[RMDB]
RNA sequence: GGGAACGACUCGAGUAGAGUCGAAAACUAUGUACAGACAGUACAGUGGAUAAGGUCUAUCGAUAUCCAACUUUAACAAUGGUACUUGCAGUGGUAUGUAUCAAGAUAGGCAGGCUAUCAUAGAAAGAAGAAGUUUAUUAUUCGUAGUAAGCUUCUUAAAAGAAACAACAACAACAAC
Reactivity to DMS in 0.01 (KOAc 150mM, MgCl2 10mM, bicine 150mM(pH8.5), 24C), signal-to-noise 9, nucleotides 027 to 126: c020u000a060u020g010u000a010c010a140g010a150c240a150g010u000a010c010a030g010u010g010g010a100u020a070a100g000g010u010c030u010a020u010c100g010a060u000a010u000c000c010a060a130c060u010u010u030a080a080c160a090a100u010g000g010u000a020c020u000u010g010c030a200g010u030g010g020u010a020u000g010u000a020u000c020a030a070g000a300u000a010g000g010c160a090g000g000c050u010a020u010c030a040u010a040g000a030a080a090g000
Reactivity to 2A3 in 0.01 (KOAc 150mM, MgCl2 10mM, bicine 150mM(pH8.5), 24C), signal-to-noise 9, nucleotides 027 to 126: c020u030a060u090g000u010a010c030a130g190a060c040a040g120u010a010c000a020g050u060g110g020a080u050a130a060g080g030u020c020u040a020u070c050g030a040u010a020u040c010c020a060a080c070u080u100u080a120a040c070a090a110u090g040g000u030a020c000u020u050g020c030a100g090u130g090g030u120a030u090g010u010a010u020c010a030a010g010a060u030a010g020g020c040a010g030g000c010u010a010u020c010a030u030a030g080a020a100a000g060